Background: Conditions: 150 mM KOAc, 10 mM MgCl2 and 150 mM bicine (pH 8.5), 24 C. Structure probing data (DMS and 2A3) for a 177-nucleotide construct. For 2A3 the reverse transcriptase was SuperScript II with manganese. For 2A3, 68,557 sequencing reads were counted. It was measured as part of the RMDB library OK2TRN.
RNA sequence: GGGAACGACUCGAGUAGAGUCGAAAAGGGACGAGUUGCAAAGGAACCGUGAGAACGGUUAAGGAGCAGCUGAUUGGCGUGCUCCUUGAACUUCGGGAAGAAAUGAGUUCCGAACAGUACGCCAGGACUAGUUCUUAGUAUUCGUACUAGGGACUAGAAAAGAAACAACAACAACAAC
Reactivity to DMS in 0.01 (KOAc 150mM, MgCl2 10mM, bicine 150mM(pH8.5), 24C), signal-to-noise 9, nucleotides 027 to 126: g000g010g010a090c100g000a090g020u000u000g010c040a040a140a210g000g000a030a030c000c000g010u000g000a220g000a150a030c020g000g000u000u000a020a010g000g000a220g010c000a080g010c010u000g010a150u010u010g000g010c000g010u000g010c000u000c020c020u000u000g000a050a070c080u000u000c050g010g010g010a080a080g000a070a080a100u010g000a110g010u000u000c010c020g000a050a050c190a040g000u000a030c040g000c010c010a060g000g010a240
Reactivity to 2A3 in 0.01 (KOAc 150mM, MgCl2 10mM, bicine 150mM(pH8.5), 24C), signal-to-noise 9, nucleotides 027 to 126: g030g000g020a010c020g020a020g020u030u020g020c020a020a030a050g060g010a020a010c000c000g000u010g020a060g010a040a000c000g000g000u010u010a010a010g030g010a020g000c000a000g000c010u030g050a240u060u160g010g000c030g010u020g000c000u000c000c000u000u040g010a020a010c010u040u030c010g020g010g040a040a040g060a040a130a070u170g020a050g040u020u000c010c000g000a020a010c030a010g020u030a000c010g000c010c010a020g010g050a030